[RMDB]
RNA sequence: GGGAACGACUCGAGUAGAGUCGAAAACAAAACAGGGCAAAAUAAAGACUAGUUAAGCCCAAACUAGCAAAAGGCCAAAAGAAGGCCAAGCGUAGUGCAGCUGAAGCAGUACGCAAUUCAGUUAAAAAUAUACCACCCAGUUCGCUGGGUGGUAUAUAAAAGAAACAACAACAACAAC
Reactivity to 2A3 in 0.01 (KOAc 150mM, MgCl2 10mM, bicine 150mM(pH8.5), 24C), signal-to-noise 1, nucleotides 027 to 126: c120a000a120a010a000c020a000g120g000g000c250a280a160a000a000u080a000a200a000g130a000c000u000a000g040u030u010a090a000g000c020c000c000a000a000a000c000u000a000g060c000a000a020a160a050g000g000c000c000a030a170a000a000g140a030a060g000g000c000c000a030a000g000c000g020u040a030g260u000g110c040a110g000c140u210g040a060a000g020c000a000g090u000a000c000g000c000a000a000u250u290c030a000g010u050u170a040a060a000a100
Reactivity to DMS in 0.01 (KOAc 150mM, MgCl2 10mM, bicine 150mM(pH8.5), 24C), signal-to-noise 2, nucleotides 027 to 126: c030a020a100a060a270c130a110g000g000g000c060a200a000a130a100u000a070a020a170g000a120c040u030a000g020u010u010a050a200g000c000c020c000a020a020a050c000u000a020g000c060a130a060a020a100g000g010c000c000a050a070a080a160g090a070a040g000g000c010c000a060a020g040c000g000u010a020g010u000g010c010a130g040c190u090g000a170a070g000c030a000g020u000a000c000g000c000a020a030u030u100c160a040g000u020u000a020a130a090a070